[RMDB]
RNA sequence: GGGAACGACUCGAGUAGAGUCGAAAAAUAUGGGGCCGGUGUCUCGCCAGGAGGCGCAGACCCGGCUCCAGGGCCAGCGCCACGGUAUGUUCCUCGUCCGCGAUUCUUCCACCUGCCCUGGGGACUACUGGUAUCCCAUUUUCGAAUGGGAUACCAGAAAAGAAACAACAACAACAAC
Reactivity to DMS in 0.01 (KOAc 150mM, MgCl2 10mM, bicine 150mM(pH8.5), 24C), signal-to-noise 1, nucleotides 027 to 126: a070u000a070u000g000g040g010g000c000c000g040g010u020g010u000c000u000c010g040c010c000a300g030g010a260g020g020c000g000c220a000g010a010c020c000c000g000g040c000u000c000c010a000g000g000g000c020c030a080g000c070g010c030c030a060c050g010g010u000a030u010g010u010u000c010c030u000c080g000u010c030c040g030c060g000a170u000u010c020u010u000c050c020a110c040c030u000g000c020c030c040u000g000g050g010g010a120c200u000a090